Source: RMDB library 15KREP, as collected in RNAgym. This 177-nucleotide RNA was probed chemically with DMS and 2A3. The RNA was probed in 150 mM KOAc, 10 mM MgCl2 and 150 mM bicine (pH 8.5) at 24 C.
RNA sequence: GGGAACGACUCGAGUAGAGUCGAAAAUAAUGGCGAAUGGGACCCCAGAUUUCCUUCCUAUUGAGAAGGAAAUAACUGGCACUCCCUUAGCCAUCCGAGUGGACGUUGUCCUCCUUCGGAUGCCCAGGUAUGGUACUGUGUUCGCACAGUACCAUACAAAAGAAACAACAACAACAAC
Reactivity to DMS in 0.01 (KOAc 150mM, MgCl2 10mM, bicine 150mM(pH8.5), 24C), signal-to-noise 3, nucleotides 027 to 126: u000a140a060u000g000g000c010g000a110a070u010g000g010g000a050c140c300c000c000a040g000a080u010u000u000c000c000u000u000c020c010u030a130u000u030g010a140g020a010a000g010g010a000a020a010u010a100a050c010u000g000g000c090a220c300u000c000c000c010u010u000a300g010c020c000a020u000c010c020g000a040g020u000g000g000a020c010g010u000u010g000u000c030c020u010c070c140u010u000c010g010g000a160u010g020c020c000c000a120g000
Reactivity to 2A3 in 0.01 (KOAc 150mM, MgCl2 10mM, bicine 150mM(pH8.5), 24C), signal-to-noise 3, nucleotides 027 to 126: u090a020a050u010g000g000c000g030a020a010u010g010g000g030a020c110c140c010c000a010g000a030u020u000u000c000c010u000u010c010c010u140a290u240u300g100a300g000a020a010g000g000a000a000a000u010a010a030c000u000g000g000c000a030c030u000c000c000c000u000u000a000g000c010c010a000u000c000c000g000a020g020u030g020g020a080c300g150u180u300g010u100c000c010u020c030c040u030u060c010g020g000a050u070g020c010c000c000a040g020